[RMDB]
RNA sequence: GGGAACGACUCGAGUAGAGUCGAAAAAAAAGAUACAUGUUUUUCUAAUGUGUUAAAGUUCAUUGGAACAGAAAGAGAUAGAUUUAUCUGCUGUUUGCGUUGAAGAAGUACAAAAUGUCCUUAAUGCUCAAGAAUAUCCGUUCGCGGAUAUUCUUGAAAAAGAAACAACAACAACAAC
Reactivity to DMS in 0.01 (KOAc 150mM, MgCl2 10mM, bicine 150mM(pH8.5), 24C), signal-to-noise 1, nucleotides 027 to 126: a080a050a070a120g020a110u030a020c060a030u000g040u000u010u010u010u020c060u030a120a020u010g010u000g000u000u000a100a050a110g020u000u000c010a020u000u000g010g010a020a020c010a020g000a040a090a070g020a040g020a060u010a110g000a150u010u020u000a050u010c000u000g000c020u000g010u010u000u000g020c030g030u000u000g010a040a050g030a070a110g000u000a120c150a030a100a080a080u010g000u000c000c020u000u000a120a110u000g010c150
Conditions: 150 mM KOAc, 10 mM MgCl2 and 150 mM bicine (pH 8.5), 24 C. An RNA of 177 nucleotides, treated with DMS and read out base by base. The DMS profile rests on 999 reads. Values cover nucleotides 27 to 126.